Record summary:
Source: RMDB library RSTRND, as collected in RNAgym. The record gives the reactivity of an RNA of 207 nucleotides to DMS and 2A3. Conditions: 150 mM KOAc, 10 mM MgCl2 and 150 mM bicine (pH 8.5), 24 C. Reactivities are given for positions 27 through 156. DMS adducts were read by reverse transcription with MarathonRT. The DMS profile rests on 2,665 reads.
RNA sequence: GGGAACGACUCGAGUAGAGUCGAAAAUUGGGUAUGGUAACAACGAAGAGAGAUAUGCUGGCUUGCCAGCGAAAUGGGUAAUCCGCAGCCAAGUCCCUAAAGCGUUGCUUCACGCCAUGGGAAAGGUCCACAGACUAAGUGGAAGUGGGUUGAACGAGUUGCAAAUUAUGUUCGCAUAAUUUGCAACAAAAGAAACAACAACAACAAC
Reactivity to DMS in 0.01 (KOAc 150mM, MgCl2 10mM, bicine 150mM(pH8.5), 24C), signal-to-noise 2, nucleotides 027 to 156: u020u020g050g010g000u000a080u010g030g040u000a050a050c050a020a180c030g000a180a140g030a020g010a070g020a130u000a030u010g060c000u010g040g000c060u000u000g000c020c020a040g010c000g000a030a030a140u010g010g010g030u000a030a050u000c020c020g050c050a090g020c060c020a060a150g010u010c010c000c000u010a020a110a070g000c030g050u000u000g000c070u010u040c090a210c030g000c080c030a300u000g000g000g000a030a040a130g010g020u010c020c000a020c060a170g030a190c140u000a020a220g030u000g020g010a060a220g020u010g000g000g000u010u010g000a110a120c090g000a190
Reactivity to 2A3 in 0.01 (KOAc 150mM, MgCl2 10mM, bicine 150mM(pH8.5), 24C), signal-to-noise 4, nucleotides 027 to 156: u060u020g010g000g020u110a130u190g010g000u050a090a030c080a070a020c090g080a120a040g050a010g000a000g010a030u050a030u260g000c010u010g020g030c030u060u120g090c000c010a000g010c010g000a030a040a020u140g020g000g000u010a040a020u020c020c030g000c040a000g040c020c010a080a030g060u020c000c000c000u030a060a070a000g020c010g030u030u160g070c070u110u110c030a020c000g000c000c030a060u080g000g000g000a030a060a000g050g010u000c000c010a030c000a070g120a120c080u160a260a020g010u020g080g000a020a020g030u050g030g030g010u010u040g020a120a050c050g020a070